About this RNA
An RNA of 207 nucleotides, treated with 2A3 and read out base by base. Reactivities are given for positions 27 through 156. The data come from the RNA Mapping Database (RMDB), library RSTRND.
[RMDB]
RNA sequence: GGGAACGACUCGAGUAGAGUCGAAAAGUGCUACUAAGCAGGUGCCGAAACGACCUGUGGCCGGGGUAAUGACCUGGGGUAUAGUAAAAACGCACCAGAUGCCACAAUGGGUGAUCCGCAGCCAAGUCCUAAGGCAACAGGCCUCUUCCCGCCCGUGCCAACUACAUGGGUUCGCCCAUGUAGUUGGAAAAGAAACAACAACAACAAC
Reactivity to 2A3 in 0.01 (KOAc 150mM, MgCl2 10mM, bicine 150mM(pH8.5), 24C), signal-to-noise 2, nucleotides 027 to 156: g020u030g010c000u010a040c050u100a030a010g000c020a010g060g040u060g070c060c130g110a130a090a020c060g080a020c000c010u020g000u050g020g030c040c030g020g000g010g000u120a080a110u120g080a070c000c010u080g000g010g000g000u080a100u030a260g100u090a000a050a030a040a000c070g050c010a010c000c000a050g040a060u090g030c070c000a040c060a080a170u120g060g020g040u050g020a120u060c050c040g020c090a020g050c040c000a010a010g050u050c000c020u080a090a130g020g000c000a020a030c040a070g040g000c020c000u100c000u040u020c000c000c000g000c020c010c010g040u100g030